Chemical mapping of a 177-nucleotide RNA with DMS and 2A3. 2A3 is a SHAPE reagent: it acylates the 2'-hydroxyl of flexible nucleotides of all four kinds. The data come from the RNA Mapping Database (RMDB), library OK2TRN. The RNA was probed in 150 mM KOAc, 10 mM MgCl2 and 150 mM bicine (pH 8.5) at 24 C. For 2A3, 1,079 sequencing reads were counted. 2A3 adducts were read by reverse transcription with SuperScript II with manganese.

[RMDB]
RNA sequence: GGGAACGACUCGAGUAGAGUCGAAAAUAUAUCGUAUUGGCGAACUUAGCGAUGUGACGAUGUGAAUGUGUGCGGGAUGUACAGAAUAAGGUCAGUAGGAUAAUCACCGAAAUCAAUAUGAGAAGGACCGUGACUACUAGUUCGCUAGUAGUCACGGAAAAGAAACAACAACAACAAC
Reactivity to DMS in 0.01 (KOAc 150mM, MgCl2 10mM, bicine 150mM(pH8.5), 24C), signal-to-noise 2, nucleotides 027 to 126: u000a070u000a070u020c050g020u000a150u000u010g000g020c040g000a020a080c080u000u000a050g050c050g000a070u000g000u000g000a060c060g000a050u000g020u010g000a120a070u000g010u030g000u000g020c010g000g000g000a090u000g020u000a060c090a160g000a100a050u010a050a040g020g000u010c050a080g010u000a020g000g000a090u010a070a100u000c090a100c030c040g000a030a060a120u020c100a060a060u040a040u010g000a060g010a060a170g000g010a180
Reactivity to 2A3 in 0.01 (KOAc 150mM, MgCl2 10mM, bicine 150mM(pH8.5), 24C), signal-to-noise 2, nucleotides 027 to 126: u120a000u020a010u050c040g010u000a030u050u100g030g000c000g010a040a080c070u100u120a050g030c000g030a100u040g040u070g060a010c000g000a060u020g100u050g090a050a080u080g010u020g000u000g080c020g000g000g000a050u070g020u060a030c000a050g050a030a150u150a180a000g040g040u070c000a000g060u060a020g060g010a050u050a080a010u110c040a020c050c050g020a070a000a010u140c010a070a000u200a050u140g070a040g050a080a010g040g020a010